[RMDB]
RNA sequence: GGGAACGACUCGAGUAGAGUCGAAAAUGCGCAUGCCCUUAAAAGAAACAAGAGGAUUUCAUGUGUAUAUAUUCCUUCCUAAAAAUUGUUCUUUUCUCUUGGAGGAUAAAGUGGAUGCAAUGUCCAGGAGACUCUGGACAUUCGUGUCCAGAGUCUCAAAAGAAACAACAACAACAAC
Reactivity to 2A3 in 0.01 (KOAc 150mM, MgCl2 10mM, bicine 150mM(pH8.5), 24C), signal-to-noise 4, nucleotides 027 to 126: u050g000c020g000c000a010u040g000c000c000c000u070u050a220a110a040a050g230a090a130a010c060a030a110g020a090g060g000a030u040u250u260c000a010u020g020u000g040u000a010u000a000u020a050u080u040c030c000u040u150c010c010u130a140a140a060a160a160u120u090g040u070u070c030u010u040u060u020c020u000c010u050u100g140g040a040g010g020a070u120a090a090a010g120u090g040g000a010u020g040c120a170a060u070g030u030c010c020a020g080
Reactivity to DMS in 0.01 (KOAc 150mM, MgCl2 10mM, bicine 150mM(pH8.5), 24C), signal-to-noise 2, nucleotides 027 to 126: u010g020c050g020c080a020u000g010c300c000c010u000u000a030a090a170a090g080a070a150a240c200a010a110g000a030g000g000a110u010u090u000c000a000u030g000u020g000u020a000u000a070u050a030u000u050c020c120u000u010c120c030u000a060a020a030a090a180u020u000g040u000u000c090u000u000u000u000c000u000c010u000u000g000g050a140g000g000a100u080a010a000a100g000u000g000g030a050u030g000c080a080a020u020g000u000c000c050a020g000